[RMDB]
RNA sequence: GGGAACGACUCGAGUAGAGUCGAAAAGUAAAGAAAGCAACGGGGCUAGCCGUCAGGUGUUCCUCCCCCCGAGAGGGGAAGAGUGAGGCUUAUCCCGGGGAACUCGGCGAAUCGUCCCCGCAUGGCAGUUUAUUUGUUAGUUCGCUAACAAAUAAACAAAAGAAACAACAACAACAAC
Reactivity to 2A3 in 0.01 (KOAc 150mM, MgCl2 10mM, bicine 150mM(pH8.5), 24C), signal-to-noise 2, nucleotides 027 to 126: g030u080a000a060a130g060a100a100a020g040c020a010a040c020g000g000g010g000c020u010a010g010c010c020g060u030c040a070g060g170u110g060u120u020c000c000u010c020c000c000c000c000c020g110a100g040a070g120g020g000g020a030a000g020a010g060u100g040a020g040g000c000u020u060a080u110c000c000c000g000g020g000g000a010a010c010u000c020g010g010c000g020a020a030u050c010g020u040c010c010c000c000g000c060a060u110g070g000c040a030
Reactivity to DMS in 0.01 (KOAc 150mM, MgCl2 10mM, bicine 150mM(pH8.5), 24C), signal-to-noise 3, nucleotides 027 to 126: g000u010a080a090a130g010a130a130a160g020c050a100a130c050g000g010g000g000c070u000a100g010c100c020g000u000c120a070g010g020u010g020u010u000c030c000u000c030c050c010c010c000c030g020a130g000a170g010g000g010g000a030a100g000a050g010u010g020a190g000g020c060u000u000a070u000c030c030c030g030g020g000g010a060a060c020u000c030g030g000c010g000a100a070u000c080g000u000c000c000c000c010g010c120a060u000g020g000c110a100